[RMDB]
RNA sequence: GGGAACGACUCGAGUAGAGUCGAAAAAUGCUCCAGAUGGGGUACUUCCACUGGAGACUGGGAGAGUUUACACCGUGGUCCCAAUAGAUGGUGUCUGGGACGACAGCAUUAUGCUGUCCAAAGACCCAACCGCGAUGUAAUUCGUUACAUCGCGGUUAAAAGAAACAACAACAACAAC
Reactivity to DMS in 0.01 (KOAc 150mM, MgCl2 10mM, bicine 150mM(pH8.5), 24C), signal-to-noise 3, nucleotides 027 to 126: a050u030g010c020u000c000c010a040g010a110u030g010g000g010g030u040a060c210u060u020c010c000a050c000u000g000g000a020g000a040c070u000g000g000g020a080g000a180g030u010u020u030a070c080a100c030c000g030u030g010g030u000c020c010c000a120a090u030a070g000a140u010g010g030u070g040u000c030u010g000g030g010a110c240g000a000c000a030g030c000a230u000u050a110u060g000c020u000g000u010c000c020a110a150a040g010a020c020c000c000
Reactivity to 2A3 in 0.01 (KOAc 150mM, MgCl2 10mM, bicine 150mM(pH8.5), 24C), signal-to-noise 3, nucleotides 027 to 126: a000u100g000c030u020c040c000a100g190a300u080g000g000g020g110u170a210c040u190u090c000c000a000c000u000g000g000a020g000a000c040u070g000g010g010a150g020a040g050u050u050u200a090c030a040c040c030g000u040g000g000u050c000c010c000a000a020u230a100g170a070u160g000g000u150g030u110c020u010g040g000g000a070c130g000a000c010a000g010c010a000u130u120a060u300g000c000u040g010u010c000c000a000a130a030g010a040c000c000c020